[RMDB]
RNA sequence: GGGAACGACUCGAGUAGAGUCGAAAAGAUAUGGAGCUUUGUCAGAUCGUAGAGUCCGAUGAAAGGUCUUCGGAAACGAAGACCUGGAGGAUGAUACGAUCUUGGAUUUAAGCUCCUAAGUCAAACCAACAUCGUAUGUUCGCAUACGAUGUUGGAAGCAAUUUAAUACCUUCGGGUAUUAAAUUGCAAAAGAAACAACAACAACAAC
Reactivity to DMS in 0.01 (KOAc 150mM, MgCl2 10mM, bicine 150mM(pH8.5), 24C), signal-to-noise 1, nucleotides 027 to 156: g000a170u000a300u000g040g040a030g020c000u000u010u000g020u010c060a040g020a030u010c020g020u000a050g010a300g000u000c000c010g050a200u030g000a200a120a060g000g010u000c000u020u000c010g040g000a150a130a210c010g030a010a010g000a020c000c000u010g000g000a130g010g010a000u010g010a300u000a000c050g000a010u020c000u000u000g020g010a080u000u000u000a060a030g060c020u000c010c000u000a020a080g010u000c050a180a070a250c010c010a020a000c010a000u000c000g010u000a020u000g030u000u000c290g000c010a010u000a020c000g000a000u000g000u000u000g000g000a020a110
Reactivity to 2A3 in 0.01 (KOAc 150mM, MgCl2 10mM, bicine 150mM(pH8.5), 24C), signal-to-noise 3, nucleotides 027 to 156: g030a010u050a060u130g000g010a000g000c000u010u010u000g010u020c000a000g000a020u010c000g000u000a000g000a010g020u000c000c010g250a300u020g020a020a000a000g000g000u000c000u000u000c010g030g010a070a040a070c010g000a010a010g000a000c000c010u000g000g010a000g000g000a000u040g010a010u010a000c000g010a000u000c000u000u030g010g010a010u080u190u240a010a000g010c000u000c000c000u000a030a010g010u000c010a050a030a090c000c000a000a000c000a000u000c000g010u000a000u000g070u070u110c300g000c170a000u000a000c010g000a000u000g000u000u000g000g000a000a010
Structure probing data (DMS and 2A3) for a 207-nucleotide construct. The DMS profile rests on 1,856 reads. As a SHAPE reagent, 2A3 marks flexible, mostly unpaired nucleotides at the ribose 2'-OH.